RNA sequence: GGGAACGACUCGAGUAGAGUCGAAAAAAACGUUUGAAUUUCAGGCUUGGGAUCAAGCUAUCAAAGGCCUGAUUGGUAAAGGUGCAAUCGGCUUGCAUCUCUUUACACAGUGCAUUAGCCAGAUCGACGUCAUAAAUGACUUCGGUCAUUUAUGACGAAAAGAAACAACAACAACAAC
Reactivity to DMS in 0.01 (KOAc 150mM, MgCl2 10mM, bicine 150mM(pH8.5), 24C), signal-to-noise 3, nucleotides 027 to 126: a030a040a050c120g000u010u010u000g010a110a130u000u000u000c050a010g000g010c020u010u000g000g000g010a030u000c080a090a100g020c160u010a020u000c040a040a030a030g000g000c010c000u000g000a050u010u000g000g030u000a010a020a010g000g000u000g010c020a050a050u000c240g010g010c230u000u010g010c000a010u010c080u010c050u000u000u000a040c100a100c200a050g000u000g010c030a120u010u000a080g010c030c050a100g020a050u000c050g030a140
Reactivity to 2A3 in 0.01 (KOAc 150mM, MgCl2 10mM, bicine 150mM(pH8.5), 24C), signal-to-noise 2, nucleotides 027 to 126: a010a010a020c130g030u120u010u100g080a130a100u030u060u030c020a010g040g000c040u030u040g030g030g020a050u080c110a170a040g010c070u010a010u020c020a000a020a020g000g000c000c000u000g000a030u010u010g040g000u010a020a000a030g050g020u040g020c020a020a090u130c210g240g030c130u010u000g010c010a010u010c010u020c010u120u000u060a010c120a000c020a040g060u050g120c050a070u080u130a000g010c000c020a050g020a060u090c070g080a060